[RMDB]
RNA sequence: GGGAACGACUCGAGUAGAGUCGAAAAGAAGAGAAAGGAGACACAUGGACAGUCUCCAGAGGUUCCUAAGGACUCGAUCGCGCCUGCCGGGAAUCAUGGACUCCCGGUUGUCCAUGAUAGAAGAAGAAUACUAGUACUGCUUCGGCAGUACUAGUAUAAAAGAAACAACAACAACAAC
Reactivity to 2A3 in 0.01 (KOAc 150mM, MgCl2 10mM, bicine 150mM(pH8.5), 24C), signal-to-noise 2, nucleotides 027 to 126: g150a040a010g150a010g030a060a060a030g000g030a010g020a010c010a000c030a150u080g060g020a020c030a100g000u000c000u000c000c000a010g000a010g030g050u060u030c010c010u040a100a080g130g000a020c010u020c020g030a050u030c020g020c010g010c020c000u030g000c000c000g000g010g000a030a060u040c060a060u180g080g010a000c010u000c030c010c000g000g040u000u070g000u000c000c000a000u010g090a110u060a070g170a210a030g050a090a000g070a090
Reactivity to DMS in 0.01 (KOAc 150mM, MgCl2 10mM, bicine 150mM(pH8.5), 24C), signal-to-noise 4, nucleotides 027 to 126: g000a150a070g000a080g030a090a210a080g000g010a010g000a020c020a060c120a080u020g000g000a060c060a090g020u000c000u010c000c000a030g010a100g040g010u030u010c020c010u030a090a120g020g000a030c020u010c050g000a050u010c030g000c300g020c010c010u010g000c000c020g030g010g010a040a020u000c010a130u060g020g000a040c070u000c020c010c010g020g000u000u010g040u000c000c000a010u010g010a160u050a060g010a080a070g030a080a100g000a130
Source: RMDB library OK1LIB, as collected in RNAgym. Structure probing data (2A3 and DMS) for a 177-nucleotide construct. 2A3 adducts were read by reverse transcription with SuperScript II with manganese.